[RMDB]
Chemical mapping of a 207-nucleotide RNA with 2A3. The reactions ran in a buffer of 150 mM KOAc, 10 mM MgCl2 and 150 mM bicine (pH 8.5), at 24 C.
RNA sequence: GGGAACGACUCGAGUAGAGUCGAAAAAUCACCGGUGGGGAACGCCAUACGGCAACGGCGUAGAAGUAAAUGCUAACCAAUCCGUGGUAUCUACGCGACGGAGCAUCCACGGAUAACUCUAACAAGGCUAAGCGUCUCGGUUUCGACCGAGACGCAACAUCCCAUGGUAGUUCGCUACCAUGGGAUGAAAAGAAACAACAACAACAAC
Reactivity to 2A3 in 0.01 (KOAc 150mM, MgCl2 10mM, bicine 150mM(pH8.5), 24C), signal-to-noise 2, nucleotides 027 to 156: a000u090c060a040c000c010g030g030u030g000g020g000g100a070a010c050g020c010c030a030u090a190c050g020g000c020a060a000c060g050g070c030g010u060a010g010a040a000g000u070a000a030a030u100g000c120u120a050a050c080c020a070a000u010c000c010g000u000g010g000u020a020u000c010u060a040c050g000c060g090a060c070g060g020a010g000c010a010u000c000c000a000c000g000g010a020u030a020a000c030u030c020u120a100a110c120a110a010g150g000c080u170a170a020g000c000g000u000c000u000c000g000g010u030u110u120c150g070a040c030c000g000a000g010a000c000g020c000a000a000